This 177-nucleotide RNA was probed chemically with 2A3.
RNA sequence: GGGAACGACUCGAGUAGAGUCGAAAAAUGAUUCGUAGUGUAAGACGAUCGACAGUCAUCGCUUGCCAGCAGGACCACCUAAGGAAUACGCUUCGGUAACUACUCGAGAUCCCAAGCGAUAAAACAAAGUGAUCUGUUCAUUCGUGAACAGAUCACUAAAAGAAACAACAACAACAAC
Reactivity to 2A3 in 0.01 (KOAc 150mM, MgCl2 10mM, bicine 150mM(pH8.5), 24C), signal-to-noise 1, nucleotides 027 to 126: a000u150g000a000u030u050c030g020u080a140g000u040g040u280a060a080g110a130c000g010a050u000c040g120a140c070a070g040u110c000a020u000c000g000c010u000u030g000c020c000a050g020c000a020g090g050a100c040c010a140c030c020u040a060a010g180g010a040a030u070a060c030g010c090u000u000c010g000g030u030a170a100c030u000a000c000u000c000g040a020g010a010u000c000c000c000a000a030g050c050g070a150u160a220a140a000a050c050a080a100
The data come from the RNA Mapping Database (RMDB), library M2PK90. The 2A3 profile rests on 877 reads.